[RMDB]
RNA sequence: GGGAACGACUCGAGUAGAGUCGAAAAAGGACAGAAACCAGGUAAAUUAGCAUGUAAUAUCCUUCCCGUUCCUGUGCAGAUGUCUGAGGCUUCUUUCUCCUUUAGUCAAAUCUGAUUUCUAUUUCUUAUCGACUGUAGCAUUCGUGCUACAGUCGAUAAAAGAAACAACAACAACAAC
Reactivity to 2A3 in 0.01 (KOAc 150mM, MgCl2 10mM, bicine 150mM(pH8.5), 24C), signal-to-noise 1, nucleotides 027 to 126: a020g050g000a030c000a000g010a000a060a000c000c040a010g010g100u150a000a040a110u080u090a090g090c140a050u050g000u050a020a100u020a050u140c010c010u000u120c010c000c000g020u040u020c030c000u100g000u000g080c000a000g020a150u100g000u000c000u080g010a050g000g010c020u060u090c000u070u200u060c060u080c040c030u010u070u170a020g050u030c000a010a040a190u020c020u040g020a020u000u000u000c040u050a140u020u030u000c080u050u000